[RMDB]
RNA sequence: GGGAACGACUCGAGUAGAGUCGAAAACGUAGCGGUGCUCGUGUUGCUAAUCACAACGUGCUUGUCAAGGAAAAUGUUCCUGUUGUGUGGUCUGCUGAAGCAUUUAACGCAUUAUCUGAAGAGUCUCGCAAGUAUGUUGUUAAGACUUCUAAGGUCAAUGCGGAAAUUAUUUCGAUAAUUUCCGCAUAAAAGAAACAACAACAACAAC
Reactivity to DMS in 0.01 (KOAc 150mM, MgCl2 10mM, bicine 150mM(pH8.5), 24C), signal-to-noise 2, nucleotides 027 to 156: c100g000u010a020g010c080g040g040u020g000c050u010c090g000u020g000u000u000g030c010u030a090a150u000c100a110c020a060a080c060g000u010g020c030u020u010g000u000c120a050a110g010g010a030a080a060a090u010g060u010u000c010c030u000g000u000u020g030u000g020u000g010g010u000c050u000g020c060u000g010a110a060g070c030a110u010u000u000a070a110c090g000c020a110u000u000a060u000c030u040g000a110a100g000a100g020u010c010u010c070g010c070a050a090g010u000a080u000g000u000u000g020u000u000a070a040g010a020c020u010u000c020u000a190a070g040g000u010c030a200
Reactivity to 2A3 in 0.01 (KOAc 150mM, MgCl2 10mM, bicine 150mM(pH8.5), 24C), signal-to-noise 3, nucleotides 027 to 156: c050g000u060a050g030c050g060g000u030g030c000u020c070g020u010g040u080u080g020c070u080a080a070u170c050a040c020a030a090c050g000u080g040c050u070u130g030u090c020a040a060g060g000a110a150a100a180u220g040u060u050c030c010u040g050u090u040g020u010g050u040g050g040u060c080u060g040c010u100g030a070a000g010c020a040u060u100u210a070a020c040g000c030a030u020u080a070u130c020u040g060a080a030g020a050g070u000c010u040c100g040c050a000a110g050u090a140u130g010u030u020g010u010u050a070a030g000a020c000u070u000c090u210a130a080g050g000u000c000a000